Conditions: 150 mM KOAc, 10 mM MgCl2 and 150 mM bicine (pH 8.5), 24 C. An RNA of 177 nucleotides, treated with 2A3 and DMS and read out base by base. The 2A3 profile rests on 1,149 reads.

RNA sequence: GGGAACGACUCGAGUAGAGUCGAAAAGUCACCACGACGGCAGACGAUGCGUUUCCAUCUUCUCUUAGAGCCAAGAAAUCCGUGGUUAAAACUUCUUUGAAGAAGAACGAACUGAAAGACGGCGCUAGCCCAGCAUUAACUUCGGUUAAUGCUGGGCAAAAGAAACAACAACAACAAC
Reactivity to 2A3 in 0.01 (KOAc 150mM, MgCl2 10mM, bicine 150mM(pH8.5), 24C), signal-to-noise 1, nucleotides 027 to 126: g020u020c010a010c090c020a040c070g120a010c030g050g000c060a040g020a060c000g050a010u060g060c040g000u000u110u000c010c000a040u000c050u110u010c050u000c030u030u070a040g000a020g050c040c000a100a070g060a110a080a040u050c080c010g060u070g000g000u070u050a030a160a050a080c020u010u000c000u100u130u140g240a210a050g000a020a000g010a020a020c040g030a040a020c000u030g030a040a080a000g120a010c030g010g030c010g050c040u080a030
Reactivity to DMS in 0.01 (KOAc 150mM, MgCl2 10mM, bicine 150mM(pH8.5), 24C), signal-to-noise 2, nucleotides 027 to 126: g020u000c070a070c060c040a220c080g020a110c100g010g000c040a100g000a040c050g010a070u040g000c090g010u000u020u000c040c020a120u000c030u000u000c030u020c070u020u010a040g030a030g000c030c020a060a130g000a050a120a020u010c080c050g010u000g000g000u000u000a010a050a080a160c040u000u000c010u000u010u000g000a120a050g010a000a030g000a020a130c130g000a020a080c030u000g010a030a070a090g010a120c080g000g000c060g000c080u010a070